This 207-nucleotide RNA was probed chemically with 2A3. The 2A3 profile rests on 514 reads. It was measured as part of the RMDB library M2RFPK.
RNA sequence: GGGAACGACUCGAGUAGAGUCGAAAAUGAAGCAAAUCCAUAAUUGCCAAUGAUGAGCAAUUCGCUAUCGCCGCCUAAAAACGGUUAGCCGGGGCUGCUAGAGCCUUGUUACCAAAGAUAGCCGGCGUUACGGCAUGAUGGUUCGCCAUCAUGCCAAGAUCGAAUAGGCGUUCGCGCCUAUUCGAUCAAAAGAAACAACAACAACAAC
Reactivity to 2A3 in 0.01 (KOAc 150mM, MgCl2 10mM, bicine 150mM(pH8.5), 24C), signal-to-noise 1, nucleotides 027 to 156: u040g010a040a000g000c030a080a000a100u010c020c000a020u050a110a030u100u040g030c000c030a190a130u300g090a100u090g020a180g020c010a000a010u040u030c110g000c050u010a000u160c000g000c000c010g000c090c000u000a000a020a020a020a020c010g060g000u090u010a040g120c120c060g000g000g050g000c010u020g100c160u200a050g070a000g240c000c060u000u010g000u000u020a000c020c020a120a000a000g170a060u000a010g000c000c000g000g060c000g010u050u030a040c130g000g000c000a000u010g000a000u000g000g070u080u110c220g020c050c000a000u030c000a000u000g010c000c000a000a000